RNA sequence: GGGAACGACUCGAGUAGAGUCGAAAAGCUAUCGCCGGGGAUAAGAACGAGAUCACCGAAGAGAAGUUAGAGAAGGCAGUGACCAAUAUUCUUGACAAGCUGUAAGGGUCAUAUAUGAACGAAAUGAUCAUUUGGGAAGACCUGUCGCCAGCCGAUACCAAUAGCCGAGAUUCGUCUCGGCUAUUGGAAAAGAAACAACAACAACAAC
Reactivity to 2A3 in 0.01 (KOAc 150mM, MgCl2 10mM, bicine 150mM(pH8.5), 24C), signal-to-noise 2, nucleotides 027 to 156: g050c010u020a010u060c040g000c030c000g020g020g000g020a030u090a180a050g060a150a010c020g000a060g010a040u030c020a010c050c080g030a080a000g020a020g060a100a020g000u060u110a020g000a010g000a080a010g030g000c030a030g010u020g070a020c010c010a040a040u040a050u130u060c010u030u070g040a060c040a070a030g000c000u020g060u110a110a120g000g040g000u020c020a000u000a010u030a010u110g050a040a020c060g020a130a080a160u140g110a060u080c010a060u160u080u010g020g010g020a070a000g040a060c020c000u020g040u030c060g020c050c000a000g000c000c040g030a030u030a080
Reactivity to DMS in 0.01 (KOAc 150mM, MgCl2 10mM, bicine 150mM(pH8.5), 24C), signal-to-noise 2, nucleotides 027 to 156: g020c070u000a040u000c010g060c020c040g040g120g020g010a060u000a060a050g020a100a080c000g000a180g010a080u000c020a100c030c050g020a080a060g040a070g010a060a050g020u010u000a100g020a120g030a080a060g020g040c030a080g020u000g010a080c040c010a070a130u000a140u000u000c040u020u000g030a110c070a120a130g000c000u000g020u010a030a140g000g000g040u000c020a030u000a040u010a090u010g040a100a190c060g040a060a070a090u050g020a110u000c000a110u010u010u000g020g000g030a140a130g010a050c040c000u000g020u000c060g010c070c030a050g030c010c020g030a030u010a100